[RMDB]
RNA sequence: GGGAACGACUCGAGUAGAGUCGAAAAAUUUUUAAUGGAAACACUGACAGAAUAAAGAGGGUGUAAUCCUACAUAUGUCAUUUAAAAAUCUGAGCAAACCAUAGUGUGCUUGCAAAACAAAUAUACUUUCCUUAGAUUGCACUCACAAAUAAGGCUAAUCAUCAUAUAUAUUCGUAUAUAUGAUGAUAAAAGAAACAACAACAACAAC
Reactivity to 2A3 in 0.01 (KOAc 150mM, MgCl2 10mM, bicine 150mM(pH8.5), 24C), signal-to-noise 2, nucleotides 027 to 156: a000u110u140u130u140u150a060a070u130g060g000a090a020a030c030a010c040u030g090a030c050a100g110a160a020u200a120a250a060g140a120g020g020g000u030g020u050a030a020u030c020c000u030a010c040a050u140a070u090g040u040c010a020u080u020u290a080a140a010a020a010u060c130u110g040a030g050c020a070a000a090c050c030a020u100a170g070u080g010u060g050c080u020u010g000c040a010a030a050a020c020a020a170a010u110a010u110a150c010u020u050u090c000c000u010u020a040g010a080u020u040g010c000a000c010u030c050a040c020a030a060a020u150a080a040g110g010c100u130a050
Reactivity to DMS in 0.01 (KOAc 150mM, MgCl2 10mM, bicine 150mM(pH8.5), 24C), signal-to-noise 1, nucleotides 027 to 156: a060u020u010u010u000u000a040a100u030g000g000a290a140a130c030a000c120u000g000a140c060a090g010a120a080u010a050a130a210g030a060g020g030g010u000g000u010a000a070u000c000c050u000a070c120a070u000a080u000g020u000c050a070u000u020u020a010a060a040a110a100u010c070u000g000a260g000c000a010a030a030c010c000a140u000a110g030u010g010u020g060c020u000u000g020c020a060a050a060a240c060a010a020a090u000a190u000a070c050u000u000u000c050c010u030u020a030g000a150u000u000g060c020a030c020u000c000a090c060a040a110a050u010a040a090g050g000c140u000a120